[RMDB]
RNA sequence: GGGAACGACUCGAGUAGAGUCGAAAACGGGUGCUGUUGCCUUAAGCAUGUGUAUAUGGGGUUCGGGGGCUGUUGCCAUGAUAUAUAUGGAUGAGACAGAAGUGGCCCCGUUGACGAGUUUAACUUAACAGUAUGUAACGUUCGCGUUACAUACUGUAAAAGAAACAACAACAACAAC
Reactivity to DMS in 0.01 (KOAc 150mM, MgCl2 10mM, bicine 150mM(pH8.5), 24C), signal-to-noise 4, nucleotides 027 to 126: c080g010g010g010u000g020c010u000g000u010u000g020c030c030u000u010a070a100g020c040a030u000g020u000g020u010a070u010a060u010g010g000g000g020u010u010c120g020g010g000g020g010c030u010g010u010u000g010c000c010a010u000g000a080u010a090u000a090u000a050u010g000g010a150u000g030a160g000a040c020a040g010a120a100g020u010g000g010c020c010c000c030g030u010u000g020a080c130g010a140g000u000u010u000a060a050c050u000u000a080
An RNA of 177 nucleotides, treated with DMS and read out base by base.
The reactions ran in a buffer of 150 mM KOAc, 10 mM MgCl2 and 150 mM bicine (pH 8.5), at 24 C.
Source: RMDB library RFMREP, as collected in RNAgym.
For DMS, 4,735 sequencing reads were counted.